[RMDB]
RNA sequence: GGGAACGACUCGAGUAGAGUCGAAAAGAAAGAAAGAAGAAUCACCAGGAGGCAAGGAUCCUCAACUACGUUAUUCGGGCACCUUGAGUUGAGAAGAGCUAGUGGUGCGCCCGGCCUGGAGAUCAAAACACGACAGGCGGGUUCGCCCGCCUGUCAACACAAGCUAGUUCUUCGGAACUAGCUUGUGAAAAGAAACAACAACAACAAC
Reactivity to 2A3 in 0.01 (KOAc 150mM, MgCl2 10mM, bicine 150mM(pH8.5), 24C), signal-to-noise 1, nucleotides 027 to 156: g040a010a040a010g050a070a130a040g120a080a000g010a050a070u010c010a020c060c000a020g000g050a020g010g070c060a070a160g020g000a000u070c000c000u050c030a010a020c010u140a050c060g140u150u080a060u140u080c040g000g030g000c000a030c010c040u070u170g020a010g040u030u030g020a010g010a150a010g000a040g020c010u080a010g080u020g130g000u020g000c020g010c020c040c020g020g000c020c020u030g010g010a060g010a020u020c080a000a120a030a000c070a030c110g000a000c010a000g000g010c050g000g000g020u000u080c130g050c030c020c020g000c020c000u000g010u010c000a000a000
Record summary
Chemical mapping of a 207-nucleotide RNA with 2A3. Source: RMDB library M2RFPK, as collected in RNAgym. For 2A3, 652 sequencing reads were counted. Conditions: 150 mM KOAc, 10 mM MgCl2 and 150 mM bicine (pH 8.5), 24 C. For 2A3 the reverse transcriptase was SuperScript II with manganese. Values are in units of 0.01, from 0 to 300, in steps of 10.